This 207-nucleotide RNA was probed chemically with DMS and 2A3. Source: RMDB library OK3TST, as collected in RNAgym. For DMS, 4,647 sequencing reads were counted. 2A3 adducts were read by reverse transcription with SuperScript II with manganese. Reactivities are given for positions 27 through 156.

RNA sequence: GGGAACGACUCGAGUAGAGUCGAAAAGGCCAUCGUUUUUACCAGACCAUUUUCGAUGGCCAUAGGUCUGGAUUAUAGUUCAAUCGCCGAGAGGCGUACAGUUAGAGUAGCGAGCUCGAAGCACGCGACCGAUAGGAGCUCGCGAAGGUCGCGGAGAGAUAUACUAAUCGUUCGCGAUUAGUAUAUCAAAAGAAACAACAACAACAAC
Reactivity to DMS in 0.01 (KOAc 150mM, MgCl2 10mM, bicine 150mM(pH8.5), 24C), signal-to-noise 3, nucleotides 027 to 156: g010g020c010c000a040u000c000g050u000u000u000u000u000a120c030c020a150g010a050c050c030a260u000u000u010u010c030g000a020u000g040g000c000c000a030u000a040g010g000u000c010u000g010g010a280u010u000a110u010a150g010u010u010c050a070a130u010c020g040c000c010g020a250g010a300g020g060c020g000u000a050c070a080g000u000u000a110g010a160g010u000a100g040c000g020a050g030c010u000c030g010a100a180g020c020a060c030g000c060g000a030c040c040g010a130u010a150g020g010a050g000c030u000c020g050c030g000a080a110g000g020u000c020g050c020g010g000a160g000a170
Reactivity to 2A3 in 0.01 (KOAc 150mM, MgCl2 10mM, bicine 150mM(pH8.5), 24C), signal-to-noise 3, nucleotides 027 to 156: g000g000c000c000a020u010c030g080u030u080u150u170u100a070c030c020a030g020a040c030c030a100u100u040u010u150c050g000a010u000g000g040c000c010a010u030a000g000g010u010c010u030g030g000a040u110u070a090u120a090g060u020u080c070a080a050u060c050g000c000c000g060a060g010a020g040g030c000g000u010a020c010a010g030u030u120a040g010a010g130u040a020g010c010g000a000g010c030u010c040g050a080a010g040c030a030c070g000c030g000a010c010c010g030a040u090a050g080g000a010g000c030u040c030g000c020g000a000a010g000g000u010c020g020c050g020g000a030g010a000